Structure probing data (DMS and 2A3) for a 177-nucleotide construct. It was measured as part of the RMDB libraries RFM100 and RFMREP. The reactions ran in a buffer of 150 mM KOAc, 10 mM MgCl2 and 150 mM bicine (pH 8.5), at 24 C.
RNA sequence: GGGAACGACUCGAGUAGAGUCGAAAAACGGAUCUACGGAUCCGAAUCUGGGUGAUGAAGAAAAUCAGACGGAUUCCCAUUGAAUUUCCAAAUAUGAUUUUAACAACCAGCUACUUCUGACAGAUAACUACCGUAGUUAUUUCGAUAACUACGGUAGAAAAGAAACAACAACAACAAC
Reactivity to DMS in 0.01 (KOAc 150mM, MgCl2 10mM, bicine 150mM(pH8.5), 24C), signal-to-noise 4, nucleotides 027 to 126: a140c000g010g000a010u010c000u000a100c190g020g000a010u000c000c000g000a030a010u010c010u000g000g000g000u000g010a090u020g000a150a150g010a040a030a060a010u000c010a020g010a160c150g000g000a070u000u010c010c120c070a140u000u030g020a050a080u010u010u000c030c020a050a060a100u020a080u000g000a000u000u000u010u010a040a110c080a090a080c050c040a020g000c160u000a060c090u020u000c030u000g000a140c090a100g010a090u010a080a140
Reactivity to 2A3 in 0.01 (KOAc 150mM, MgCl2 10mM, bicine 150mM(pH8.5), 24C), signal-to-noise 9, nucleotides 027 to 126: a000c010g000g000a000u000c000u030a050c240g120g000a000u000c010c000g000a010a050u010c000u020g070g040g140u080g070a090u060g060a060a200g100a100a080a010a020u010c010a010g040a080c040g020g000a010u030u020c030c020c030a030u030u170g020a030a050u080u060u060c030c000a070a070a020u250a070u060g070a060u020u040u070u110a070a110c040a020a040c030c020a010g030c030u080a080c030u110u070c020u060g090a050c010a100g100a130u070a140a070